The record gives the reactivity of an RNA of 177 nucleotides to 2A3 and DMS. The RNA was probed in 150 mM KOAc, 10 mM MgCl2 and 150 mM bicine (pH 8.5) at 24 C.
[RMDB]
RNA sequence: GGGAACGACUCGAGUAGAGUCGAAAAGCUAAAGUGUGGUGGCCACAAGUUAAGGACAAAUUAUCUGGGCACCGUAAUCUUAGGGUACGCUUCCUGGAUGAUGAGCAAAUGGCAAAAUUGGCGGCGCGCCUCUGAGGUAAUUCGUUACCUCAGAGGCAAAAGAAACAACAACAACAAC
Reactivity to 2A3 in 0.01 (KOAc 150mM, MgCl2 10mM, bicine 150mM(pH8.5), 24C), signal-to-noise 1, nucleotides 027 to 126: g030c010u130a120a030a100g090u070g030u040g070g080u110g030g050c030c010a080c000a030a050g050u130u120a110a070g090g060a030c040a040a160a090u090u030a030u000c020u020g000g040g010c010a010c010c030g010u030a070a050u080c030u090u120a100g060g150g020u060a040c070g010c040u040u000c030c000u000g020g050a070u030g030a080u050g000a080g030c030a030a160a120u090g060g040c000a000a020a090a220u100u030g030g000c000g070g100c060g000c010
Reactivity to DMS in 0.01 (KOAc 150mM, MgCl2 10mM, bicine 150mM(pH8.5), 24C), signal-to-noise 2, nucleotides 027 to 126: g000c040u000a090a040a070g020u030g030u000g010g040u000g000g020c020c040a040c180a040a080g080u000u010a040a090g030g010a120c160a050a090a030u000u010a060u000c040u000g000g000g010c090a020c210c020g000u010a030a030u010c010u000u000a140g010g010g040u000a070c080g000c160u000u000c040c000u010g020g020a030u000g000a040u010g010a180g000c030a020a030a060u000g010g010c030a030a040a050a120u010u010g000g020c030g000g000c090g010c150
It was measured as part of the RMDB library OK2TRN.
2A3 adducts were read by reverse transcription with SuperScript II with manganese.